This 207-nucleotide RNA was probed chemically with 2A3 and DMS. Values cover nucleotides 27 to 156. It was measured as part of the RMDB library OK3TST.
[RMDB]
RNA sequence: GGGAACGACUCGAGUAGAGUCGAAAAUUGAAGAGUGGCCUCAUAGAUUGAGAGCUGAAAGGAGUAAAGCCUGAUCUUGCGUUACCCAUUUCUAGGACAAUAGUCCCAAUUGUGCCUUGCCUAGGACGCAUGUUAGUAUAUGACAUGGGGCAGUUUACGAUACGUGAUUAUUCGUAAUCACGUAUCGAAAAGAAACAACAACAACAAC
Reactivity to 2A3 in 0.01 (KOAc 150mM, MgCl2 10mM, bicine 150mM(pH8.5), 24C), signal-to-noise 5, nucleotides 027 to 156: u080u110g050a070a020g060a020g080u110g040g010c000c020u010c020a050u060a040g090a090u050u160g130a070g030a020g040c020u010g040a100a040a050g110g040a070g060u140a040a080a010g020c000c010u030g010a050u020c000u020u050g030c010g050u060u160a190c030c000c000a020u050u110u010c050u040a000g010g000a010c000a030a030u030a080g040u010c010c000c000a040a050u030u040g030u090g120c020c020u010u040g010c000c010u060a090g020g030a030c020g000c040a000u010g000u010u040a100g050u050a120u040a060u300g040a000c010a030u010g000g000g020g000c030a020g020u050u090u050a060
Reactivity to DMS in 0.01 (KOAc 150mM, MgCl2 10mM, bicine 150mM(pH8.5), 24C), signal-to-noise 2, nucleotides 027 to 156: u000u000g030a120a090g010a130g010u000g000g000c020c010u000c020a060u000a120g000a170u000u000g020a120g020a190g040c030u000g010a050a070a070g010g020a100g050u000a060a160a080g020c010c080u000g000a090u010c070u000u000g000c040g000u010u010a090c010c010c020a140u000u000u000c030u010a080g000g020a070c030a030a100u010a110g030u010c000c000c030a050a090u000u020g010u000g000c050c010u000u010g020c040c020u010a120g010g000a030c050g000c020a040u010g000u000u000a040g030u000a120u000a120u010g020a040c030a060u000g020g010g030g020c010a100g030u000u000u000a110